[RMDB]
RNA sequence: GGGAACGACUCGAGUAGAGUCGAAAAAAUGUUGCUAUCAUUGCCAGCUUUGCUUUAUCAAGAAAGGCUUAGGCAUAUCCUAUGGCAGGAAGAAGCGGAGACCCCGACGAGGAACUUCUCAAAGCAGGAGCUAUAAUGCCUUCGGGCAUUAUAGCUCAAAAGAAACAACAACAACAAC
Reactivity to DMS in 0.01 (KOAc 150mM, MgCl2 10mM, bicine 150mM(pH8.5), 24C), signal-to-noise 1, nucleotides 027 to 126: a000a050u030g030u060u000g060c010u010a000u110c080a110u000u000g000c060c000a010g000c000u000u000u010g000c070u000u000u000a290u060c160a080a080g000a010a000a060g000g000c000u000u000a020g020g020c050a020u000a010u040c000c000u080a060u000g020g060c120a100g000g020a080a160g000a200a150g060c060g010g000a070g000a090c050c000c000c010g010a300c070g030a020g000g000a090a120c130u000u000c000u000c080a040a050a190g000c220a100g060
Reactivity to 2A3 in 0.01 (KOAc 150mM, MgCl2 10mM, bicine 150mM(pH8.5), 24C), signal-to-noise 1, nucleotides 027 to 126: a000a020u300g000u090u060g050c000u000a010u080c000a200u000u120g000c000c000a000g010c030u150u000u000g030c000u150u000u110a180u230c090a010a000g080a000a090a000g070g000c090u150u090a150g000g090c010a000u040a050u060c000c000u030a000u080g000g000c000a010g050g000a180a000g000a070a010g140c000g030g030a030g000a120c000c000c000c050g030a010c060g000a110g140g000a000a000c010u000u050c000u000c000a190a270a000g000c090a090g130